[RMDB]
RNA sequence: GGGAACGACUCGAGUAGAGUCGAAAAUGCCGGGGAGCCCGGCACAUCCACGCGCGGCGCCGAGAUCGACAGCCUGCGGCCGUUCCGGGCGAUGUUGGAGUCGCGCGCGCAGCUGGUGGCGGCAGGGUCAGAGCUAGUAGUUCGCUACUAGCUCUGAAAAAGAAACAACAACAACAAC
Reactivity to 2A3 in 0.01 (KOAc 150mM, MgCl2 10mM, bicine 150mM(pH8.5), 24C), signal-to-noise 1, nucleotides 027 to 126: u020g000c010c020g040g010g060g190a240g140c000c050c000g000g070c000a020c020a020u060c020c010a010c020g020c000g010c030g060g000c010g000c040c050g050a060g010a100u080c010g090a100c050a070g100c000c000u110g020c070g180g000c010c080g080u200u000c050c010g020g000g020c020g040a040u050g130u120u030g010g040a070g010u040c000g030c000g010c000g000c020g000c000a050g000c040u210g090g010u060g010g030c000g050g000c040a030g060g000g020
Reactivity to DMS in 0.01 (KOAc 150mM, MgCl2 10mM, bicine 150mM(pH8.5), 24C), signal-to-noise 2, nucleotides 027 to 126: u000g010c000c030g030g010g010g000a210g020c080c020c010g000g010c010a000c080a070u010c010c040a110c060g000c030g010c010g000g010c030g030c030c000g010a040g010a050u000c020g000a080c120a170g020c050c020u010g000c100g020g030c040c060g020u000u000c030c030g030g010g000c030g020a050u000g010u030u000g010g000a050g010u000c010g020c020g000c000g010c000g010c070a090g030c070u000g010g030u010g010g020c050g000g000c030a050g010g000g010
This 177-nucleotide RNA was probed chemically with 2A3 and DMS. The RNA was probed in 150 mM KOAc, 10 mM MgCl2 and 150 mM bicine (pH 8.5) at 24 C. The 2A3 profile rests on 1,268 reads.